[RMDB]
Annotation
This 177-nucleotide RNA was probed chemically with 2A3 and DMS. Conditions: 150 mM KOAc, 10 mM MgCl2 and 150 mM bicine (pH 8.5), 24 C. Reactivities are given for positions 27 through 126.

RNA sequence: GGGAACGACUCGAGUAGAGUCGAAAAACUUUGAAGGCCGAAGAGGAGAAAGGUUCCAUGUGAACGGCACUUGCACAUGGGUAAGCCGAUCCUAAGGGACGGGGUAACCCCGGCAGACAGCGCGAUCAACUGAUCGGUAGUUCGCUACCGAUCAGUUAAAAGAAACAACAACAACAAC
Reactivity to 2A3 in 0.01 (KOAc 150mM, MgCl2 10mM, bicine 150mM(pH8.5), 24C), signal-to-noise 3, nucleotides 027 to 126: a010c040u140u060u120g070a090a020g040g000c000c030g060a080a060g010a070g100g020a050g050a030a080a030g030g000u090u000c000c000a030u030g010u040g090a050a120c050g080g050c030a020c130u090u190g000c010a000c000a030u030g000g030g000u050a060a020g040c020c000g050a110u010c000c000u040a090a100g060g000g040a020c020g000g000g040g020u020a060a100c020c000c010c010g010g010c040a010g010a100c040a010g030c040g010c010g040a020u060c040
Reactivity to DMS in 0.01 (KOAc 150mM, MgCl2 10mM, bicine 150mM(pH8.5), 24C), signal-to-noise 4, nucleotides 027 to 126: a050c050u000u020u030g020a140a080g020g000c020c030g030a100a050g000a060g000g000a040g010a050a090a100g000g000u000u020c000c010a020u010g000u010g000a040a060c120g020g010c040a050c060u010u030g000c030a030c010a030u030g010g000g020u020a080a090g000c000c010g000a120u000c020c010u010a110a130g010g010g000a070c020g000g000g010g010u010a170a110c050c020c000c060g000g000c050a060g000a070c070a060g020c030g020c070g010a100u030c120